Structure probing data (DMS) for a 177-nucleotide construct. The DMS profile rests on 1,211 reads. Source: RMDB library TTRDEL, as collected in RNAgym. The RNA was probed in 150 mM KOAc, 10 mM MgCl2 and 150 mM bicine (pH 8.5) at 24 C.
[RMDB]
RNA sequence: GGGAACGACUCGAGUAGAGUCGAAAAGAUAUGGAUUGAGGGAGACCGUGAUCGGAAACGAUCACGGGUCUUUGAUCUCACUGUCCUAAGUCAAACUGAACACGCAUCUUCGGAUGCGUGUUCAGAACAAUCGCGUAAGCUUCGGCUUACGCGAUUGAAAAGAAACAACAACAACAAC
Reactivity to DMS in 0.01 (KOAc 150mM, MgCl2 10mM, bicine 150mM(pH8.5), 24C), signal-to-noise 2, nucleotides 027 to 126: g010a030u020a200u000g000g010a050u020u010g010a000g020g000g000a030g010a040c000c000g030u000g000a010u000c000g040g020a110a050a130c000g020a000u010c000a000c000g010g000g010u000c000u010u000u000g000a050u010c000u000c020a070c300u010g010u000c000c000u000a060a130g010u000c030a120a080a160c010u000g000a010a000c000a010c000g000c000a000u000c000u000u000c190g010g010a010u000g000c010g000u000g000u000u000c010a000g000a080a100